An RNA of 177 nucleotides, treated with DMS and 2A3 and read out base by base.
[RMDB]
RNA sequence: GGGAACGACUCGAGUAGAGUCGAAAAUAAUAAUCAAGGUGGGAGCAGGGCAGUGUCUAGGUAGGUAUGGCACUGAAAGAGCUGAAAGUUCUACAUCUUGUUCCAAAGGCAAACAGGAGAAUAUUGAACUUUUAAUACCUUUCGAGGUAUUAAAAGUAAAAGAAACAACAACAACAAC
Reactivity to DMS in 0.01 (KOAc 150mM, MgCl2 10mM, bicine 150mM(pH8.5), 24C), signal-to-noise 6, nucleotides 027 to 126: u000a120a120u000a110a110u010c030a040a040g020g040u000g000g000g020a060g020c050a070g010g010g010c000a020g010u000g000u000c010u000a140g020g010u010a040g020g020u000a130u010g010g010c010a020c010u000g000a040a110a080g010a090g010c040u010g010a070a090a110g010u000u000c010u000a090c060a030u010c010u000u000g000u000u000c020c020a070a080a090g010g010c070a050a050a070c080a050g000g000a080g010a080a050u010a080u000u000g000a170
Reactivity to 2A3 in 0.01 (KOAc 150mM, MgCl2 10mM, bicine 150mM(pH8.5), 24C), signal-to-noise 4, nucleotides 027 to 126: u020a000a010u050a010a050u090c030a000a030g030g010u030g010g040g000a040g010c020a020g010g030g040c000a000g000u010g020u000c020u040a050g050g080u050a010g010g050u080a060u090g020g000c010a000c010u010g010a070a100a030g100a030g030c040u080g100a090a090a050g000u060u000c010u070a130c000a040u010c000u020u020g010u010u020c010c010a070a030a020g060g000c040a070a060a040c020a070g080g050a090g050a130a030u150a100u150u120g020a030
For DMS, 7,908 sequencing reads were counted. It was measured as part of the RMDB library OK2TST. The reactions ran in a buffer of 150 mM KOAc, 10 mM MgCl2 and 150 mM bicine (pH 8.5), at 24 C. 2A3 adducts were read by reverse transcription with SuperScript II with manganese.